[RMDB]
RNA sequence: GGGAACGACUCGAGUAGAGUCGAAAAUAGACCUGAUUCGUCAGGUCUACCAGCGAGGGAGAGAGCGAGGGUCCCACGCACCCAGGGUCGCACGCUCCCAAAGACUUCCUGAAUUCGUUCAGGAAAACUAGUAGAUUUCAUUCGUGAAAUCUACUAGAAAAGAAACAACAACAACAAC
Reactivity to 2A3 in 0.01 (KOAc 150mM, MgCl2 10mM, bicine 150mM(pH8.5), 24C), signal-to-noise 6, nucleotides 027 to 126: u070a000g000a000c000c000u000g000a020u030u050c130g050u000c100a000g000g000u000c000u010a020c000c020a040g100c040g100a150g000g020g000a030g000a020g000a000g020c010g010a080g030g030g030u040c040c070c020a040c070g020c020a040c010c010c020a030g170g030g070u040c010g010c020a010c060g030c010u030c000c000c010a030a080a010g060a050c050u030u010c010c000u010g020a020a020u090u090c190g040u080u010c020a010g000g000a010a010a000a020
Reactivity to DMS in 0.01 (KOAc 150mM, MgCl2 10mM, bicine 150mM(pH8.5), 24C), signal-to-noise 7, nucleotides 027 to 126: u000a010g000a020c000c000u000g000a020u000u020c200g010u000c000a010g010g000u000c000u000a020c040c050a110g000c140g010a200g010g010g000a050g010a070g000a060g010c020g010a120g020g010g010u010c020c050c120a080c200g010c170a060c030c020c010a130g010g010g010u000c010g020c030a120c060g000c020u000c010c010c010a040a080a070g000a130c150u000u000c000c010u010g000a010a020u000u010c190g020u000u000c000a010g000g000a010a020a070a140